[RMDB]
RNA sequence: GGGAACGACUCGAGUAGAGUCGAAAAUGGCAGAAUCCGUGGGUGUUGAUAAAGACGCCUUUAUUCGUGGCAUUGCCGACGUUGCAGUUCCAGGACGUAUGGAGCGCAUCGAUCGAGGUCAAGAGUUCCUUGCUGUCGUGGACUAUGCCCAUAAACACCAUCCCGCAUGAUUCGUCAUGCGGGAUGGAAAAGAAACAACAACAACAAC
Reactivity to 2A3 in 0.01 (KOAc 150mM, MgCl2 10mM, bicine 150mM(pH8.5), 24C), signal-to-noise 1, nucleotides 027 to 156: u060g030g000c010a000g000a070a000u080c030c050g010u050g020g000g010u090g020u110u080g060a250u160a200a140a050g040a030c020g000c020c030u030u060u030a120u000u080c070g000u040g000g000c030a080u040u130g000c000c000g020a020c020g020u010u010g000c020a050g010u000u000c020c000a020g090g010a060c090g090u180a120u050g000g000a000g010c000g010c030a040u050c000g100a140u030c000g020a030g000g060u120c040a120a010g050a000g050u030u070c010c000u070u120g000c010u030g030u100c050g090u020g000g000a010c020u050a030u180g020c000c000c000a060u160a130a030a000c000a030